[RMDB]
RNA sequence: GGGAACGACUCGAGUAGAGUCGAAAACAGCAGUUGCAGAAGGCUCGAAGCAUAAGGCAAGAAUGCUUGCAGAAUCUUGAUGGGAUCAUAGAUUUUCCCAAGAGACUUCAGGAGAAAAAGCAAAUGCAUGUACGUUACUCUUCGGAGUAACGUACAUAAAAGAAACAACAACAACAAC
Reactivity to 2A3 in 0.01 (KOAc 150mM, MgCl2 10mM, bicine 150mM(pH8.5), 24C), signal-to-noise 2, nucleotides 027 to 126: c000a010g050c020a020g050u050u040g000c000a000g030a150a030g090g000c000u000c030g050a000a020g000c010a030u030a170a050g150g000c020a010a020g120a140a080u150g050c000u000u030g040c000a010g060a060a040u010c010u070u060g020a090u170g070g000g050a020u040c030a110u160a260g160a240u180u090u010u000c010c000c000a000a000g010a010g010a020c020u010u000c080a060g060g050a030g050a040a160a020a010a030g000c000a050a000a020u030g020c040
Reactivity to DMS in 0.01 (KOAc 150mM, MgCl2 10mM, bicine 150mM(pH8.5), 24C), signal-to-noise 2, nucleotides 027 to 126: c120a150g020c040a010g050u000u000g010c000a100g020a110a080g000g010c020u000c050g000a060a050g010c050a040u000a060a090g010g010c070a060a060g010a170a030u000g000c000u000u010g010c100a070g000a060a070u000c000u000u010g020a240u000g010g000g040a170u000c090a120u000a080g000a090u000u000u010u000c000c000c000a010a300g000a040g000a040c110u000u000c040a030g020g000a080g000a040a040a090a220a070g000c020a020a030a090u010g000c070

An RNA of 177 nucleotides, treated with 2A3 and DMS and read out base by base. The RNA was probed in 150 mM KOAc, 10 mM MgCl2 and 150 mM bicine (pH 8.5) at 24 C. The data come from the RNA Mapping Database (RMDB), library OK2TRN. Values are in units of 0.01, from 0 to 300, in steps of 10. The DMS profile rests on 1,478 reads.